This 207-nucleotide RNA was probed chemically with 2A3. It was measured as part of the RMDB library ARCHII. Conditions: 150 mM KOAc, 10 mM MgCl2 and 150 mM bicine (pH 8.5), 24 C.
RNA sequence: GGGAACGACUCGAGUAGAGUCGAAAAAGGACUCACACUAGCCUGUUCAUGGGCUAGGCCGGGUCAAACCGGCAGUGAGUUAAUUCACAUGAAAUCGCGCUUGUCCGGGUCGCUUGGGCAGGUGCUAAAUCCAAGGCGGCUCGGCGAAAUCCAGCCUCAACCUUGUAAUCUUCGGAUUACAAGGUUGAAAAGAAACAACAACAACAAC
Reactivity to 2A3 in 0.01 (KOAc 150mM, MgCl2 10mM, bicine 150mM(pH8.5), 24C), signal-to-noise 1, nucleotides 027 to 156: a010g160g010a010c000u000c000a000c000a000c000u000a000g020c000c020u060g070u300u150c180a230u300g000g000g000c030u000a000g010g030c000c000g000g000g050u040c020a020a010a020c000c000g000g000c010a000g000u000g050a000g000u000u000a020a060u060u210c130a070c050a010u250g110a080a100a100u140c060g000c000g030c110u120u110g050u040c000c000g000g010g000u000c020g000c020u030u020g020g000g000c010a020g200g040u080g030c050u070a000a000a000u010c030c030a010a040g170g000c000g010g000c030u070c000g020g080c020g030a020a040a000u020c080c000a000g090c080c000u000